Source information:
Source: RMDB library OK2TRN, as collected in RNAgym. An RNA of 177 nucleotides, treated with DMS and read out base by base.
RNA sequence: GGGAACGACUCGAGUAGAGUCGAAAACCGUGUUAAUUAUACAUCACGGCACUCAUGUAUAAUUAAGAGUGAGGCUUAUUCGGUACGGUGGACAUGCGAAAGCAUGUCCAUCGUACUGAAUAAGCCAGCUGGAAGUACGGUUCGCCGUACUUCCAGCAAAAGAAACAACAACAACAAC
Reactivity to DMS in 0.01 (KOAc 150mM, MgCl2 10mM, bicine 150mM(pH8.5), 24C), signal-to-noise 1, nucleotides 027 to 126: c000c000g020u000g020u030u030a020a000u000u000a020u000a000c000a000u000c110a140c140g020g020c100a030c110u020c240a060u000g010u000a000u000a000a000u000u000a030a070g020a120g010u000g000a180g000g040c000u000u000a000u000u000c010g000g000u000a000c010g010g000u000g000g000a010c000a000u010g000c030g000a180a060a250g000c000a010u000g000u000c010c000a000u000c000g000u000a000c000u000g000a000a000u000a000a010g010c000c000a010

Background: The reactions ran in a buffer of 150 mM KOAc, 10 mM MgCl2 and 150 mM bicine (pH 8.5), at 24 C.